Chemical mapping of a 177-nucleotide RNA with 2A3 and DMS. The RNA was probed in 150 mM KOAc, 10 mM MgCl2 and 150 mM bicine (pH 8.5) at 24 C. For 2A3 the reverse transcriptase was SuperScript II with manganese. The 2A3 profile rests on 882 reads. Reactivities are given for positions 27 through 126.
RNA sequence: GGGAACGACUCGAGUAGAGUCGAAAACAUGGCUAAAUAUAUUAGUCUAUUUAGUUUCAUGAUCAGUGAUAGCGAGCAUCCAAUGACUAAUAAUAAAUGAUGCAAGAAUAAUAUUCCAAAAGAAAGGCUAGGAGCUAGUAUUCGUACUAGCUCCUAGAAAAGAAACAACAACAACAAC
Reactivity to 2A3 in 0.01 (KOAc 150mM, MgCl2 10mM, bicine 150mM(pH8.5), 24C), signal-to-noise 2, nucleotides 027 to 126: c000a000u000g020g000c000u000a000a000a000u000a010u020a010u000u040a010g010u020c010u000a000u020u020u010a030g040u030u160u190c000a020u030g200a120u140c040a070g150u010g140a100u060a070g040c120g040a010g050c040a010u060c040c080a160a100u100g020a010c050u030a010a010u090a110a130u150a080a060a100u170g000a030u050g030c060a090a030g120a030a020u160a100a000u090a130u130u050c020c040a000a010a070a090g110a060a080a000g100g000
Reactivity to DMS in 0.01 (KOAc 150mM, MgCl2 10mM, bicine 150mM(pH8.5), 24C), signal-to-noise 3, nucleotides 027 to 126: c010a000u000g010g000c000u000a000a000a000u000a050u000a050u000u000a020g000u000c000u000a000u000u010u000a020g000u010u000u070c000a000u000g000a150u020c160a110g010u020g050a130u030a180g010c040g000a210g000c030a030u000c000c150a110a020u020g000a020c000u000a010a000u000a100a120u040a050a140a050u030g010a010u000g000c010a050a090g000a040a060u010a040a090u020a280u000u000c030c020a020a060a070a060g030a110a110a090g020g010